RNA sequence: GGGAACGACUCGAGUAGAGUCGAAAACUAUAUUGGAAACAGUUAAGUAACCAAGCAGGGCCAGGAUUUAGCUAGGCAGAGGAGAUAAAGGAAAGUACUACAGGUAAAGGGAAGAGUUAGUACAGAUUUAGAGGCUUGUAUUGACCUGGGGAAAAGGCUGAUUGAGUGCGUUCGCGCACUCAAUCAGAAAAGAAACAACAACAACAAC
Reactivity to 2A3 in 0.01 (KOAc 150mM, MgCl2 10mM, bicine 150mM(pH8.5), 24C), signal-to-noise 1, nucleotides 027 to 156: c030u010a030u030a050u300u110g070g040a040a060a040c020a020g030u030u150a130a070g000u030a030a010c010c000a020a010g000c010a040g010g000g060c020c000a010g000g020a000u040u090u020a030g050c040u040a010g000g000c010a010g020a010g050g030a070g000a030u090a120a020a010g050g010a000a080a010g010u040a040c000u010a010c020a040g010g060u120a060a040a040g050g000g000a030a000g020a030g000u050u010a000g000u010a010c010a010g040a010u070u070u130a070g020a000g040g000c020u060u040g100u050a060u030u040g060a060c020c040u010g000g000g020g010a000a090a010a110g050g000

The record gives the reactivity of an RNA of 207 nucleotides to 2A3. It was measured as part of the RMDB library OK3TST. The 2A3 profile rests on 829 reads.